[RMDB]
RNA sequence: GGGAACGACUCGAGUAGAGUCGAAAAGAAUGAAAGCAAUUAACAGACUCAUCAUGACACACUUCGUGAAAAUGUUCAAGCGGCGCGGGCUGAAACCGAGGGUGUUGACACCACAAGACUACAUGAACUCAUUAUGAAGUUUCGACUUCAUAAUGAGAAAAGAAACAACAACAACAAC
Reactivity to 2A3 in 0.01 (KOAc 150mM, MgCl2 10mM, bicine 150mM(pH8.5), 24C), signal-to-noise 5, nucleotides 027 to 126: g060a020a060u130g040a120a030a020g060c060a030a090u100u070a140a040c020a050g050a100c020u020c040a040u020c010a030u110g050a020c010a010c000a010c100u090u050c030g030u020g100a040a070a020a110u090g020u060u060c060a080a020g030c030g030g000c040g010c040g010g020g000c030u060g020a110a010a010c010c010g010a040g030g010g000u030g020u060u080g020a020c030a020c020c010a030c030a090a040g040a040c050u100a010c060a100u110g050a060a040
Reactivity to DMS in 0.01 (KOAc 150mM, MgCl2 10mM, bicine 150mM(pH8.5), 24C), signal-to-noise 7, nucleotides 027 to 126: g010a110a090u000g010a100a090a100g010c060a050a090u000u000a060a090c080a070g010a090c050u000c060a070u000c040a060u000g010a160c070a060c070a070c120u010u000c080g010u000g000a060a050a080a090u010g000u000u010c070a080a130g010c050g020g000c050g020c060g010g000g020c020u000g000a070a080a050c080c060g010a070g000g010g010u000g010u000u010g010a080c080a060c050c030a050c130a050a060g000a080c070u000a040c090a060u010g010a110a130